[RMDB]
RNA sequence: GGGAACGACUCGAGUAGAGUCGAAAAAAGUGAAUAAGUAAAUUGUGAAAGUUCAGGGUUGACCAACAACCACACCAAGAUUAUUAACUUAUCAAAUGAACAGGUACUAAACGAGAUGACACAGCACGCUAUGAUAGUUCUUCGGAACUAUCAUAGCAAAAGAAACAACAACAACAAC
Reactivity to 2A3 in 0.01 (KOAc 150mM, MgCl2 10mM, bicine 150mM(pH8.5), 24C), signal-to-noise 1, nucleotides 027 to 126: a000a000g090u030g010a020a060u050a050a000g030u080a010a020a090u260u090g060u080g170a130a040a010g030u030u070c070a000g040g000g030u020u010g030a110c000c000a000a090c000a000a040c000c000a030c000a000c010c020a070a040g080a070u060u040a020u120u060a200a020c040u060u100a040u060c040a070a040a000u090g010a060a040c050a020g020g030u080a100c060u200a140a070a000c060g020a010g030a110u080g000a010c000a000c000a080g020c020a000c040
Reactivity to DMS in 0.01 (KOAc 150mM, MgCl2 10mM, bicine 150mM(pH8.5), 24C), signal-to-noise 2, nucleotides 027 to 126: a060a060g000u000g000a040a010u000a000a050g020u000a070a060a120u000u030g000u000g010a080a150a190g010u000u010c050a070g000g000g050u000u010g000a100c140c070a110a130c060a020a010c080c000a070c120a040c080c040a050a090g000a050u010u030a060u000u010a030a060c060u010u000a070u000c060a020a040a090u030g000a050a070c110a020g000g020u000a040c100u000a030a050a080c060g000a060g020a030u010g030a030c070a020c100a030g000c160a060c240
Source: RMDB library RFMREP, as collected in RNAgym.
This 177-nucleotide RNA was probed chemically with 2A3 and DMS.
DMS adducts were read by reverse transcription with MarathonRT.
Reactivities are rounded to 0.1 and cut off at 0 and 3.
The reactions ran in a buffer of 150 mM KOAc, 10 mM MgCl2 and 150 mM bicine (pH 8.5), at 24 C.
For 2A3, 766 sequencing reads were counted.